The data come from the RNA Mapping Database (RMDB), library OK1LIB. Chemical mapping of a 177-nucleotide RNA with 2A3 and DMS. The reactions ran in a buffer of 150 mM KOAc, 10 mM MgCl2 and 150 mM bicine (pH 8.5), at 24 C.

RNA sequence: GGGAACGACUCGAGUAGAGUCGAAAAACACGAAAUCCAAAAGAAAACAGAGUCGCGCAUAUAACUGGCUCGACUGAUGCGCGACAAAUCGAGCCAUGUAAAGAACAAAGGAAAACAACAAUCGAAACGUCAUCGAGCUCUUCGGAGCUUGAUGACGAAAAGAAACAACAACAACAAC
Reactivity to 2A3 in 0.01 (KOAc 150mM, MgCl2 10mM, bicine 150mM(pH8.5), 24C), signal-to-noise 2, nucleotides 027 to 126: a000c150a000c050g100a140a000a000u050c020c050a000a070a120a080g090a050a140a040a130c030a000g060a000g050u000c010g000c020g080c080a020u140a030u140a160a130c050u090g000g000c000u020c020g120a130c090u100g020a000u000g000c000g000c000g000a000c050a110a000a000u120c000g000a000g000c000c000a000u120g080u080a160a190a000g130a030a100c060a060a080a040g120g020a050a230a000a000c120a020a000c010a050a050u120c090g060a130a030a000
Reactivity to DMS in 0.01 (KOAc 150mM, MgCl2 10mM, bicine 150mM(pH8.5), 24C), signal-to-noise 1, nucleotides 027 to 126: a040c100a060c150g000a050a060a220u020c000c000a000a000a070a300g000a110a100a020a100c120a060g000a060g000u000c000g000c000g000c000a000u070a000u070a090a000c090u040g040g000c000u000c000g040a040c300u000g000a060u070g030c000g000c000g000a000c000a000a000a040u000c010g000a040g000c000c060a150u000g060u040a180a090a100g000a100a000c070a000a000a060g000g000a170a080a080a120c150a190a040c300a010a060u060c300g000a120a030a040